Notes
An RNA of 177 nucleotides, treated with 2A3 and DMS and read out base by base. The reactions ran in a buffer of 150 mM KOAc, 10 mM MgCl2 and 150 mM bicine (pH 8.5), at 24 C. The DMS profile rests on 4,443 reads. The 2A3 profile rests on 3,827 reads. The data come from the RNA Mapping Database (RMDB), library OK2TST.

RNA sequence: GGGAACGACUCGAGUAGAGUCGAAAAGACAGAGACAAUGGCACUGUAAUGCUGUUUCAUCUCGACCUCAUUCAUUGUUGCGGUGGAAACCGACGCCUCCAGCGAGGUCAACAGAGGGGUAAUGAGCAAUAGUACUGCGUUUCGACGCAGUACUAUUAAAAGAAACAACAACAACAAC
Reactivity to 2A3 in 0.01 (KOAc 150mM, MgCl2 10mM, bicine 150mM(pH8.5), 24C), signal-to-noise 3, nucleotides 027 to 126: g060a010c050a020g040a000g000a030c030a040a080u040g030g000c030a020c110u130g130u300a080a060u070g020c020u010g050u000u010u070c030a060u020c010u010c010g020a020c010c010u010c000a100u220u070c020a040u060u150g020u020u030g010c010g000g000u010g050g130a060a080a040c000c050g050a110c080g030c000c000u020c000c000a040g060c030g100a010g000g030u010c010a010a010c010a010g050a030g000g040g000g000u040a080a080u140g040a030g040c050
Reactivity to DMS in 0.01 (KOAc 150mM, MgCl2 10mM, bicine 150mM(pH8.5), 24C), signal-to-noise 5, nucleotides 027 to 126: g010a090c130a110g000a070g030a070c120a040a030u020g000g020c030a120c140u010g020u020a100a120u000g010c020u010g010u000u000u000c120a120u010c010u000c020g010a060c050c000u000c020a080u010u000c080a140u020u010g010u000u000g010c010g000g000u000g010g030a070a100a040c030c000g020a120c130g000c020c010u000c020c060a180g020c220g000a030g010g010u000c020a020a010c030a040g000a060g020g010g000g000u000a050a100u010g000a080g020c300